RNA sequence: GGGAACGACUCGAGUAGAGUCGAAAAAGCGCGCGUACGCGCGCGCAGUGCAGAUAGCAGCGCCAUUUACAGAGCUAUAAGCAUCAUAGUUGUCAUAGCUCUUUGAAUGGUACUGCCAUAUGCACAAAUACAUAACGGCAUUCGUGCCGUUAUGUAUAAAAGAAACAACAACAACAAC
Reactivity to DMS in 0.01 (KOAc 150mM, MgCl2 10mM, bicine 150mM(pH8.5), 24C), signal-to-noise 3, nucleotides 027 to 126: a100g040c020g050c000g120c000g040u040a090c170g020c060g040c040g030c000g030c010a040g000u000g000c000a030g020a060u010a130g000c030a010g040c020g010c010c000a010u000u000u020a030c110a020g000a030g000c000u000a000u000a140a200g000c060a050u020c200a120u060a140g000u010u010g010u030c120a030u000a000g000c000u000c000u000u000u010g000a000a000u010g000g030u000a080c010u000g000c000c030a060u000a050u010g000c010a000c000a030a080
Reactivity to 2A3 in 0.01 (KOAc 150mM, MgCl2 10mM, bicine 150mM(pH8.5), 24C), signal-to-noise 4, nucleotides 027 to 126: a000g010c010g000c010g000c020g050u090a100c260g040c000g000c000g040c000g020c120a000g000u000g000c000a000g000a050u070a070g000c000a000g000c010g000c020c000a000u010u000u000a030c020a020g000a000g000c000u000a010u020a070a040g030c010a010u110c040a100u150a220g160u120u070g050u050c010a010u000a000g000c000u000c000u000u010u010g000a000a000u000g000g010u000a020c000u010g000c000c010a080u060a020u100g000c010a000c000a000a060

Source information: This 177-nucleotide RNA was probed chemically with DMS and 2A3. Reactivities are given for positions 27 through 126. Source: RMDB libraries RFM100 and RFMREP, as collected in RNAgym.